Description:
This 177-nucleotide RNA was probed chemically with 2A3 and DMS. 2A3 adducts were read by reverse transcription with SuperScript II with manganese. The RNA was probed in 150 mM KOAc, 10 mM MgCl2 and 150 mM bicine (pH 8.5) at 24 C. For DMS, 1,558 sequencing reads were counted.
[RMDB]
RNA sequence: GGGAACGACUCGAGUAGAGUCGAAAAACGAGCUGUACGCAGCUCGAAUUUCUAUGGAAAAGAGGUGAAGUGGACAGAAGGGAUGUCUGAAAUUCUAUCCUGAGGCUAGUGACUCUACGGAGUCACAUGUGGGGUAAACGUUCGCGUUUACCCCACAAAAAGAAACAACAACAACAAC
Reactivity to 2A3 in 0.01 (KOAc 150mM, MgCl2 10mM, bicine 150mM(pH8.5), 24C), signal-to-noise 2, nucleotides 027 to 126: a040c030g030a000g000c000u000g030u070a010c270g000c100a000g000c000u000c000g000a000a000u000u000u020c030u090a100u100g060g000a020a090a020a040g030a030g040g000u060g040a030a040g010u100g070g010a020c020a010g060a060a100g040g030g000a010u020g010u020c010u070g080a050a050a050u090u000c030u070a010u030c000c040u000g020a040g030g000c010u010a090g000u010g110a000c000u000c000u010a060c130g090g000a000g000u000c000a000c000a030
Reactivity to DMS in 0.01 (KOAc 150mM, MgCl2 10mM, bicine 150mM(pH8.5), 24C), signal-to-noise 1, nucleotides 027 to 126: a090c000g000a020g000c000u020g040u010a040c160g000c000a030g000c000u000c000g000a000a050u000u000u000c020u000a080u040g020g000a090a060a080a000g010a070g000g020u000g000a100a240g040u060g000g000a010c110a060g010a120a000g000g010g010a000u020g030u000c040u030g000a000a040a020u010u010c040u060a130u000c020c000u010g000a090g000g020c080u010a120g000u020g000a020c000u000c000u000a090c220g070g020a010g020u000c000a010c000a000